[RMDB]
RNA sequence: GGGAACGACUCGAGUAGAGUCGAAAACUUGGUGGACUUUAUAGUCCAUCCGCACGCCAACAUGGACUGCGAUGGCAUCUACAUCGUGGAUGUGCAGAUCUGGCAGGACUCCGGUGAUGCGCGCACGCACACUUUAGGUCUUCGGACCUAAAGUGUGAAAAGAAACAACAACAACAAC
Reactivity to 2A3 in 0.01 (KOAc 150mM, MgCl2 10mM, bicine 150mM(pH8.5), 24C), signal-to-noise 7, nucleotides 027 to 126: c010u030u070g000g000u010g010g000a010c010u120u210u280a260u300a210g000u000c000c000a000u000c000c000g000c000a020c020g000c010c010a070a050c050a250u170g010g020a010c010u000g000c010g050a060u020g030g000c000a010u000c010u020a040c020a300u230c270g050u030g030g020a020u030g020u140g160c020a020g030a220u060c060u160g130g000c010a010g010g060a060c030u020c060c060g020g020u020g030a240u030g010c030g000c010g020c010a040c070g040
Reactivity to DMS in 0.01 (KOAc 150mM, MgCl2 10mM, bicine 150mM(pH8.5), 24C), signal-to-noise 6, nucleotides 027 to 126: c040u000u010g030g020u000g000g010a010c010u000u020u010a140u000a070g020u000c000c000a020u000c000c100g000c030a020c030g020c010c060a100a150c180a080u000g010g010a100c010u000g010c010g020a100u010g010g010c040a010u000c020u000a030c020a140u000c270g030u000g010g000a020u000g010u000g000c050a050g000a100u000c070u000g020g010c010a030g000g000a060c080u010c180c140g000g010u000g000a190u000g010c020g010c110g000c120a080c210g010
The record gives the reactivity of an RNA of 177 nucleotides to 2A3 and DMS. Values cover nucleotides 27 to 126.